[RMDB]
Chemical mapping of a 207-nucleotide RNA with 2A3.
For 2A3 the reverse transcriptase was SuperScript II with manganese.
Reactivities are given for positions 27 through 156.
Conditions: 150 mM KOAc, 10 mM MgCl2 and 150 mM bicine (pH 8.5), 24 C.
RNA sequence: GGGAACGACUCGAGUAGAGUCGAAAAUUAGUACUGCUACAUUUUUAAGACCCUUAGUUAUUUAGCUUUACCGCCCAGGAUGGGGUGCAGCGUUCCUGCAAUAUCCAGGGCACCUAGGUGCAGCCUUCAUGCCUCAUGCCGUUCGCGGCAUGAGGAAUCCACAAAAAUAGUUCGCUAUUUUUGUGGAAAAAGAAACAACAACAACAAC
Reactivity to 2A3 in 0.01 (KOAc 150mM, MgCl2 10mM, bicine 150mM(pH8.5), 24C), signal-to-noise 1, nucleotides 027 to 156: u090u020a020g020u010a050c070u070g050c010u030a040c020a190u130u010u030u050u220a080a060g090a160c000c000c000u050u040a070g040u020u090a220u140u120u070a010g010c000u050u120u050a070c010c000g000c000c000c000a000g000g000a010u030g030g040g010g080u040g000c000a000g000c020g100u050u200c010c020u010g000c010a020a030u040a050u190c020c010a020g000g000g040c000a010c020c010u020a030g020g040u050g050c020a050g100c000c030u040u120c020a060u110g000c010c000u000c000a000u010g040c000c010g000u000u060c150g030c020g030g000c000a000u020g050a000g000g020a000a000